RNA sequence: GGGAACGACUCGAGUAGAGUCGAAAACGCUCUAUCGCCUGAUGGCCUAUGAGGAUUUCCGCCACCUCAUCAAGCAGAAGCGCGCCUUCGCGCAAGACCUUAUGACGCCAACGGAAAAGCGCAUUCAAAAUUACGAGUACUUCGGUACUCGUAAUUUAAAAGAAACAACAACAACAAC
Reactivity to DMS in 0.01 (KOAc 150mM, MgCl2 10mM, bicine 150mM(pH8.5), 24C), signal-to-noise 4, nucleotides 027 to 126: c130g000c040u000c030u000a030u000c180g040c040c030u010g010a130u000g010g020c020c020u000a070u010g010a040g000g000a160u010u000u010c050c020g020c020c050a160c090c020u000c020a020u000c090a070a070g020c050a060g010a110a110g000c030g000c050g030c250c110u000u010c070g030c010g000c030a050a070g000a140c160c050u020u000a070u000g000a060c090g010c020c040a060a150c070g040g000a030a040a090a090g020c030g000c060a110u000u000c080a050
Reactivity to 2A3 in 0.01 (KOAc 150mM, MgCl2 10mM, bicine 150mM(pH8.5), 24C), signal-to-noise 1, nucleotides 027 to 126: c030g040c000u010c060u070a050u130c070g040c040c050u140g090a160u180g020g000c000c010u080a060u140g000a030g080g050a090u020u080u000c010c030g000c000c030a020c000c000u000c010a040u030c040a070a000g030c020a040g050a220a030g000c030g000c000g050c040c070u200u260c090g000c010g030c020a040a000g060a020c010c000u060u030a060u070g020a010c020g020c020c000a030a010c000g080g000a000a070a010a010g010c060g040c050a070u130u150c090a070
The record gives the reactivity of an RNA of 177 nucleotides to DMS and 2A3. For 2A3 the reverse transcriptase was SuperScript II with manganese. DMS adducts were read by reverse transcription with MarathonRT. The data come from the RNA Mapping Database (RMDB), library OK2TST. 2A3 is a SHAPE reagent: it acylates the 2'-hydroxyl of flexible nucleotides of all four kinds.